Overview: This 177-nucleotide RNA was probed chemically with 2A3 and DMS. It was measured as part of the RMDB library OK2TRN. 2A3 adducts were read by reverse transcription with SuperScript II with manganese. Values cover nucleotides 27 to 126. The RNA was probed in 150 mM KOAc, 10 mM MgCl2 and 150 mM bicine (pH 8.5) at 24 C.

RNA sequence: GGGAACGACUCGAGUAGAGUCGAAAAAGGUGGAUGACAGCUACUGUGACGCCCUGACCCGUCCCGAGCCUGUCCACGAGUUCUGCGCUGGGAGGGAGUGCCAGCCCAGGUACCUGCCACCAGGGGCAGAAGAAGCGUGAUUCGUCACGCUUCUUCUAAAAGAAACAACAACAACAAC
Reactivity to 2A3 in 0.01 (KOAc 150mM, MgCl2 10mM, bicine 150mM(pH8.5), 24C), signal-to-noise 1, nucleotides 027 to 126: a000g130g010u030g030g040a130u070g030a030c030a020g010c010u100a100c060u210g050u100g040a030c060g000c000c000c080u030g130a140c010c000c060g060u060c020c020c000g000a010g020c000c030u080g000u030c000c030a030c040g030a070g010u080u030c030u020g050c050g000c000u060g000g030g000a220g050g030g010a030g070u070g040c000c000a010g030c110c000c000a010g000g000u010a050c030c020u050g080c000c000a000c000c010a040g020g010g020g010c040
Reactivity to DMS in 0.01 (KOAc 150mM, MgCl2 10mM, bicine 150mM(pH8.5), 24C), signal-to-noise 2, nucleotides 027 to 126: a070g010g010u010g010g030a130u000g020a100c150a050g000c040u020a120c070u000g000u000g000a080c060g010c040c040c040u000g000a060c060c070c020g010u000c020c050c070g010a090g010c050c050u000g000u010c040c070a070c100g010a110g010u010u000c040u000g020c090g010c000u000g000g000g020a140g010g010g000a080g010u000g010c000c010a070g000c030c050c050a070g000g000u000a040c080c030u010g020c000c010a090c030c030a050g000g000g020g020c100